[RMDB]
RNA sequence: GGGAACGACUCGAGUAGAGUCGAAAACAGAUUAGGGAAAGCACCAGCACGCAGAGGUGCAGCAGGGCGAUGCGGAAGGUGUUACAGGUGUUGCACUUAGCAAUGGUCGGUGCGACCAGCAGGAGUGUCAUCCCCUACUAUUCGUAGUAGGGGAUGAAAAAGAAACAACAACAACAAC
Reactivity to 2A3 in 0.01 (KOAc 150mM, MgCl2 10mM, bicine 150mM(pH8.5), 24C), signal-to-noise 8, nucleotides 027 to 126: c050a030g170a160u190u250a120g020g020g060a060a130a020g020c010a020c010c010a010g040c060a010c080g040c030a020g020a050g120g070u080g030c010a000g030c010a010g020g090g030c040g060a050u070g010c020g020g040a100a050g090g010u040g040u100u120a080c070a070g000g100u050g020u030u030g010c010a010c000u040u030a030g000c070a120a290u090g000g000u020c030g040g100u140g100c070g000a000c000c000a010g030c040a010g040g190a040g000u050g030
Reactivity to DMS in 0.01 (KOAc 150mM, MgCl2 10mM, bicine 150mM(pH8.5), 24C), signal-to-noise 5, nucleotides 027 to 126: c050a080g010a070u030u010a050g000g030g000a080a110a110g010c040a060c020c020a120g000c110a120c120g020c030a060g000a100g000g000u010g020c020a060g030c090a070g030g000g000c060g020a090u010g000c040g020g000a140a090g010g000u000g010u000u000a080c110a170g010g020u020g020u000u020g000c000a030c020u000u000a130g000c000a060a090u040g020g010u020c010g030g020u020g010c020g010a040c000c010a060g000c040a080g010g000a040g000u010g000
Structure probing data (2A3 and DMS) for a 177-nucleotide construct. The 2A3 profile rests on 8,809 reads. It was measured as part of the RMDB library OK1LIB. The RNA was probed in 150 mM KOAc, 10 mM MgCl2 and 150 mM bicine (pH 8.5) at 24 C.